[RMDB]
RNA sequence: GGGAACGACUCGAGUAGAGUCGAAAAUCAGUGCCUCUCAGGAAAGUAGCAGCUUGGAAUAGAAUCUGGCAUGCCUAAGGCCUUUGGGGAACUGGGAUGCUUAUUUCCUCUGCCUUCCUUGGCUGCCAGCGAUCCAUCUCUUCGGAGAUGGAUCGCUAAAAGAAACAACAACAACAAC
Reactivity to 2A3 in 0.01 (KOAc 150mM, MgCl2 10mM, bicine 150mM(pH8.5), 24C), signal-to-noise 1, nucleotides 027 to 126: u240c050a010g030u050g120c000c060u160c000u050c000a020g050g050a080a050a000g070u150a080g000c010a000g000c040u050u140g010g000a010a000u070a060g070a070a110u080c090u040g010g000c000a010u200g240c060c000u070a060a000g030g090c000c020u120u280u050g090g000g000g040a100a030c000u010g000g030g050a000u140g030c020u000u170a080u040u000u010c000c000u000c030u000g050c000c000u000u000c030c000u000u020g000g000c000u000g000c000c050

The data come from the RNA Mapping Database (RMDB), library RFM100.
This 177-nucleotide RNA was probed chemically with 2A3.
The RNA was probed in 150 mM KOAc, 10 mM MgCl2 and 150 mM bicine (pH 8.5) at 24 C.
The 2A3 profile rests on 507 reads.
For 2A3 the reverse transcriptase was SuperScript II with manganese.
Values cover nucleotides 27 to 126.